[RMDB]
RNA sequence: GGGAACGACUCGAGUAGAGUCGAAAAACGGCUUUAUUGAUACAGUUGGAUUUGAUUUGUACAGUCAAAUGUUAGAAGAAGCUGUAAAUGAAAAACGUGGUAUUAAGGAACCAGAAUCUGAGGUGCCUGUGUGUCGACUAUUCGUAGUCGACACACAAAAAGAAACAACAACAACAAC
Reactivity to 2A3 in 0.01 (KOAc 150mM, MgCl2 10mM, bicine 150mM(pH8.5), 24C), signal-to-noise 2, nucleotides 027 to 126: a000c040g000g000c000u010u020u050a070u090u060g140a070u070a160c040a130g030u100u120g070g020a040u000u010u010g040a070u000u110u060g150u140a130c110a080g000u000c000a000a030a110u130g030u300u300a110g000a160a000g010a220a000g010c020u030g010u040a030a160a080u130g100a010a040a040a040a040c060g030u090g000g000u000a050u250u080a300a000g000g060a000a020c020c000a230g130a070a000u030c020u030g020a030g010g000u000g020c000c130
Reactivity to DMS in 0.01 (KOAc 150mM, MgCl2 10mM, bicine 150mM(pH8.5), 24C), signal-to-noise 1, nucleotides 027 to 126: a070c000g040g030c020u000u000u000a050u060u000g000a130u030a030c000a040g080u040u000g000g000a070u000u000u040g030a040u020u030u000g090u030a130c110a080g000u000c030a000a000a000u000g000u000u000a100g030a070a300g000a200a110g010c000u010g030u040a000a030a030u010g000a050a030a130a050a010c050g030u020g000g060u000a000u020u000a010a170g030g000a000a110c040c140a170g010a060a070u000c030u010g000a290g010g000u000g000c000c080